[RMDB]
RNA sequence: GGGAACGACUCGAGUAGAGUCGAAAACCCUGGUUCCCCCUGACGUCCAGCCCCUCCCCGGUCCGAGAGAAGGGGGACUCCGGAACGCCUUGCAUGCUGGGGACGAAGCCGCCCCCGGGCGCUCCCCCUAUAUCUUACGCUUCGGCGUAAGAUAUAGAAAAGAAACAACAACAACAAC
Reactivity to DMS in 0.01 (KOAc 150mM, MgCl2 10mM, bicine 150mM(pH8.5), 24C), signal-to-noise 1, nucleotides 027 to 126: c020c010c020u010g000g010u000u000c000c010c010c060c050u010g020a120c170g020u010c030c060a090g010c030c000c010c000u000c020c020c020c040g000g020u000c000c030g020a150g000a040g000a100a080g010g000g010g020g020a110c020u000c020c010g000g000a070a060c060g010c140c060u000u010g020c030a060u000g000c050u000g020g000g010g000a050c030g000a130a190g020c130c060g000c030c000c010c020c030g040g000g010c050g020c110u000c000c000c010c050